[RMDB]
RNA sequence: GGGAACGACUCGAGUAGAGUCGAAAAGCCUUGCUGUAGGCGUAUAUGAUCCUAAGCAACAGAGAAACCACGGUUCUCUUCUCUUCUUAUUUCGUUAUUGUCUUCCCUUUUUACUAUGGGUAAAGUCUCAUUCCGUAAGUUUCGACUUACGGAAUGAAAAAGAAACAACAACAACAAC
Reactivity to 2A3 in 0.01 (KOAc 150mM, MgCl2 10mM, bicine 150mM(pH8.5), 24C), signal-to-noise 2, nucleotides 027 to 126: g000c000c000u040u070g060c040u160g160u180a020g060g000c060g090u060a160u040a090u300g100a120u060c010c010u000a050a010g000c010a030a020c030a020g050a010g040a120a070a000c060c020a020c110g070g080u020u010c000u000c000u080u010c030u000c020u110u050c020u050u110a140u150u130u070c050g080u080u140a110u090u190g090u040c000u050u070c000c000c000u130u100u030u020u020a070c090u080a110u150g010g050g070u060a020a010a080g020u020c000
Reactivity to DMS in 0.01 (KOAc 150mM, MgCl2 10mM, bicine 150mM(pH8.5), 24C), signal-to-noise 4, nucleotides 027 to 126: g010c040c050u000u000g020c050u000g010u000a050g020g020c100g020u010a060u020a080u020g010a100u010c010c020u000a060a070g020c130a060a070c160a050g010a110g010a090a080a090c060c050a100c170g020g020u000u000c040u000c010u000u000c030u000c040u000u000c030u000u000a100u000u000u010c040g010u000u000a080u010u000g000u000c070u000u000c000c010c010u000u000u000u000u000a030c080u000a100u020g010g010g010u010a020a050a060g010u010c110

An RNA of 177 nucleotides, treated with 2A3 and DMS and read out base by base. DMS adducts were read by reverse transcription with MarathonRT. It was measured as part of the RMDB library OK2TST.